[RMDB]
RNA sequence: GGGAACGACUCGAGUAGAGUCGAAAACGAGCUUGAGUUGCGAGUCGGGGGGAUCGUCCUCGUUAUCAACGUCAAAGCCAAUAAUAACUGGCAAAGAAAAACAAAACCUAGCUUUCGCUGCCUAAUAAGCAGUAGCAUAGCUGAUCCUCCGUGCAUCGAUAUGUUAGCCGUUCGCGGCUAACAUAUCAAAAGAAACAACAACAACAAC
Reactivity to 2A3 in 0.01 (KOAc 150mM, MgCl2 10mM, bicine 150mM(pH8.5), 24C), signal-to-noise 4, nucleotides 027 to 156: c010g010a010g050c020u070u110g050a040g100u080u080g060c020g030a030g070u090c030g010g000g000g000g000g020a030u190c000g030u060c000c000u000c010g020u030u010a020u050c030a020a030c030g030u010c010a000a050a050g010c020c040a030a030u230a180a020u120a110a110c120u050g000g000c000a010a090a090g060a030a060a030a000a010c090a010a130a020a020c040c080u040a010g020c010u030u060u040c030g000c000u010g000c000c000u070a100a050u220a180a020g000c010a000g020u020a020g030c050a040u040a020g000c010u030g020a060u050c000c020u020c040c030g060u060g060c030a090u100c090
Reactivity to DMS in 0.01 (KOAc 150mM, MgCl2 10mM, bicine 150mM(pH8.5), 24C), signal-to-noise 1, nucleotides 027 to 156: c040g000a120g050c050u000u020g000a160g030u000u000g000c040g000a160g050u000c060g030g000g050g000g040g000a070u020c030g010u020c010c010u000c040g000u000u040a070u040c130a100a110c120g020u000c030a100a120a300g010c000c000a070a120u020a150a100u010a090a170c160u000g020g020c070a040a070a150g000a080a090a110a000a200c060a030a070a030a030c010c020u010a090g000c050u000u000u000c010g000c030u000g040c010c000u000a110a090u010a050a180g000c020a040g010u000a040g000c070a080u000a020g000c030u000g010a030u000c030c010u000c010c070g080u000g000c060a060u000c060